This 177-nucleotide RNA was probed chemically with 2A3. Source: RMDB library OK1LIB, as collected in RNAgym. Conditions: 150 mM KOAc, 10 mM MgCl2 and 150 mM bicine (pH 8.5), 24 C. Reactivities are given for positions 27 through 126. For 2A3, 396 sequencing reads were counted.
[RMDB]
RNA sequence: GGGAACGACUCGAGUAGAGUCGAAAAGAACAUUUUAAUUCACCGUCACGCGGACGAUCCGGGUUACGACGAAAACGACCAUCACUAUUACGAGAGAGAGCAUGACCUAUGAUGUCAGUCGCCCCAGCGUGCGCAGCCUCUUCGGAGGCUGCGCACGAAAAGAAACAACAACAACAAC
Reactivity to 2A3 in 0.01 (KOAc 150mM, MgCl2 10mM, bicine 150mM(pH8.5), 24C), signal-to-noise 1, nucleotides 027 to 126: g040a000a000c050a150u120u120u080u080a090a120u100u040c140a150c020c050g010u000c000a000c000g000c000g010g050a030c030g080a040u170c000c040g000g010g000u120u050a000c050g010a000c100g150a020a030a020a030c000g000a000c000c000a000u040c000a040c040u090a120u190u050a080c050g000a060g010a000g000a000g000a020g080c000a060u050g030a210c000c000u210a100u040g000a000u070g000u230c100a130g030u020c000g000c000c000c000c000a000g000